[RMDB]
RNA sequence: GGGAACGACUCGAGUAGAGUCGAAAAGAACAUGCGUUCGCGCAUGUUCAAAUAAUAUCAGCGGUAAUCGAGGCGUAAAUAUUACCGCUGAACGCCUCGAUAAAAGAGCUGGCUUCGGCCAGCUCAAGAUAUAUCGUUAGUUCGCUAACGAUAUAUCAAAAGAAACAACAACAACAAC
Reactivity to 2A3 in 0.01 (KOAc 150mM, MgCl2 10mM, bicine 150mM(pH8.5), 24C), signal-to-noise 6, nucleotides 027 to 126: g000a000a000c000a010u000g010c000g020u030u050c180g000c000g010c100a000u000g000u000u000c000a000a000a000u050a010a020u100a050u120c040a000g010c010g050g050u090a070a030u040c040g030a040g050g040c050g040u050a010a110a080u210a060u120u110a060c000c010g000c000u000g010a000a000c000g010c000c010u010c020g020a030u080a120a150a020a040g010a000g010c000u000g010g010c000u020u060c190g120g000c010c010a000g000c000u000c000a000a000
Reactivity to DMS in 0.01 (KOAc 150mM, MgCl2 10mM, bicine 150mM(pH8.5), 24C), signal-to-noise 5, nucleotides 027 to 126: g000a020a010c010a000u000g010c010g010u000u010c240g030c010g020c000a000u000g010u010u010c000a030a090a060u010a090a080u010a100u010c040a030g010c020g010g000u000a050a020u000c100g010a070g010g010c060g000u000a050a100a090u000a060u000u000a090c010c010g000c020u000g000a030a040c100g010c010c000u010c080g010a080u010a050a050a130a120g000a010g000c000u000g000g000c000u010u010c200g020g010c000c000a010g010c000u000c000a000a030

Annotation: An RNA of 177 nucleotides, treated with 2A3 and DMS and read out base by base. The RNA was probed in 150 mM KOAc, 10 mM MgCl2 and 150 mM bicine (pH 8.5) at 24 C. For 2A3, 13,722 sequencing reads were counted.